[RMDB]
RNA sequence: GGGAACGACUCGAGUAGAGUCGAAAAUAAACACAGGCCUACAGGAUUAUGAAGCGGCACUUAAGAUUGAUCCAUCCAACAAAAUUGUACAAAUUGAUGCUGAGAAGAUUCGGAAUGUAAUUCAAGGAACAGAACUAAAAUCUUAAUGACUAUUAGAGCCAUUUAUAGCUUUCGAGCUAUAAAUGGCAAAAGAAACAACAACAACAAC
Reactivity to DMS in 0.01 (KOAc 150mM, MgCl2 10mM, bicine 150mM(pH8.5), 24C), signal-to-noise 1, nucleotides 027 to 156: u000a080a110a100c060a100c070a110g020g000c020c050u000a180c100a060g040g000a060u000u000a100u010g010a070a050g000c060g020g010c060a020c090u000u000a120a100g020a060u010u020g020a140u000c040c000a140u000c060c020a010a200c060a070a050a090a070u000u000g030u000a130c050a020a010a100u020u000g000a130u000g010c000u010g000a170g010a060a150g000a070u010u000c060g020g000a080a090u000g000u000a060a040u000u000c010a090a080g010g000a050a100c040a040g020a060a100c090u000a020a090a030a060u000c020u020u000a070a080u000g000a120c000u010a180u000u000a110g000a250
Reactivity to 2A3 in 0.01 (KOAc 150mM, MgCl2 10mM, bicine 150mM(pH8.5), 24C), signal-to-noise 2, nucleotides 027 to 156: u050a000a020a000c020a010c050a060g000g080c000c020u090a010c080a050g060g030a060u070u040a070u210g060a100a000g030c010g020g020c020a000c040u040u090a070a030g010a100u060u070g020a010u040c000c000a030u000c010c010a040a020c020a070a040a090a070u150u140g030u100a080c020a040a140a030u020u050g020a030u070g020c050u030g010a010g000a130a030g010a110u110u060c050g000g030a070a030u060g020u060a040a050u010u130c010a000a020g000g010a000a020c050a030g070a040a010c070u110a070a120a090a010u040c020u010u070a060a070u120g050a020c020u060a130u100u150a070g030a010
Background: Structure probing data (DMS and 2A3) for a 207-nucleotide construct. Reactivities are given for positions 27 through 156. The DMS profile rests on 1,712 reads. Values are in units of 0.01, from 0 to 300, in steps of 10.